The record gives the reactivity of an RNA of 207 nucleotides to DMS and 2A3. For DMS the reverse transcriptase was MarathonRT. Conditions: 150 mM KOAc, 10 mM MgCl2 and 150 mM bicine (pH 8.5), 24 C.
RNA sequence: GGGAACGACUCGAGUAGAGUCGAAAAUGACAGGUGGGUAGAUUCGUUCUGCGAUCUGGUGCGAAAGUGGAAACCUAUUGGCUGGGCUGAGGAAACAGGACAGAUCAAAUCAGGUGUUGGGCCUUUCCUUGUGAAGCGUAUGAUCGAGACUGGUUCGAUGGACACAGAUAUUCGUAUCUGUGUCCAUAAAAGAAACAACAACAACAAC
Reactivity to DMS in 0.01 (KOAc 150mM, MgCl2 10mM, bicine 150mM(pH8.5), 24C), signal-to-noise 2, nucleotides 027 to 156: u010g030a120c040a070g000g040u010g000g030g080u000a070g020a140u000u000c030g020u000u000c010u000g020c050g020a070u000c020u000g020g060u000g020c040g010a090a070a170g030u000g020g000a100a030a070c020c020u020a130u010u010g020g030c040u010g020g020g000c040u020g000a120g000g020a090a080a070c000a060g000g010a100c070a070g030a090u010c040a050a040a090u000c050a080g030g010u010g020u000u000g030g020g000c000c040u010u000u000c000c020u010u000g020u000g000a070a060g050c050g040u000a070u000g010a090u010c060g000a130g000a080c060u000g000g010u000u000c070g010
Reactivity to 2A3 in 0.01 (KOAc 150mM, MgCl2 10mM, bicine 150mM(pH8.5), 24C), signal-to-noise 2, nucleotides 027 to 156: u090g020a020c060a050g000g040u050g010g070g000u090a050g060a120u100u100c070g040u040u010c020u040g000c000g010a000u000c010u040g010g000u050g020c000g020a150a060a010g030u020g010g030a010a040a040c010c000u030a120u070u060g000g030c030u030g050g000g000c000u020g010a040g060g070a060a070a020c050a040g020g070a000c010a040g060a060u020c030a010a100a070u070c050a030g090g000u000g050u080u080g050g010g030c000c020u020u060u010c040c000u050u090g040u060g110a070a000g010c010g030u160a070u120g070a060u090c050g020a030g010a020c050u090g000g050u090u130c020g050